[RMDB]
RNA sequence: GGGAACGACUCGAGUAGAGUCGAAAACAGUGAAAGGGGAGGUCAGCGUCAGCAGCCCGCCGCUGAACGCAGGACAACGCCAAAGGUCGGCGGGAAAAGAUACAGGCUGAAGAUACAGCCAGUACAAAUCGUCAUGGUACUUCGGUACCAUGACGAUAAAAGAAACAACAACAACAAC
Reactivity to 2A3 in 0.01 (KOAc 150mM, MgCl2 10mM, bicine 150mM(pH8.5), 24C), signal-to-noise 1, nucleotides 027 to 126: c000a050g020u030g170a090a000a030g150g000g000g000a280g020g030u160c080a010g000c000g000u000c000a000g090c010a000g000c000c000c000g000c000c000g000c000u050g000a000a000c000g000c000a010g030g030a010c030a240a170c070g010c000c050a120a000a000g050g120u200c060g020g030c010g000g000g000a020a000a000a000g000a000u060a000c100a060g000g000c020u000g020a110a030g070a010u120a010c000a000g000c000c000a040g000u000a000c020a020a090
Reactivity to DMS in 0.01 (KOAc 150mM, MgCl2 10mM, bicine 150mM(pH8.5), 24C), signal-to-noise 1, nucleotides 027 to 126: c110a150g040u000g000a000a000a030g000g000g000g000a000g000g000u000c020a080g000c030g020u000c120a060g040c000a130g030c060c000c070g170c010c050g060c000u000g070a050a050c010g040c070a050g000g000a000c100a120a130c170g000c110c110a050a100a050g020g080u000c060g000g000c000g070g000g020a060a000a050a080g000a200u000a100c000a120g000g000c000u000g000a150a300g000a180u000a080c000a030g070c000c000a140g020u000a000c200a060a100

An RNA of 177 nucleotides, treated with 2A3 and DMS and read out base by base. Source: RMDB library OK1LIB, as collected in RNAgym. The 2A3 profile rests on 753 reads. The RNA was probed in 150 mM KOAc, 10 mM MgCl2 and 150 mM bicine (pH 8.5) at 24 C. The DMS profile rests on 952 reads. For DMS the reverse transcriptase was MarathonRT. Reactivities are rounded to 0.1 and cut off at 0 and 3.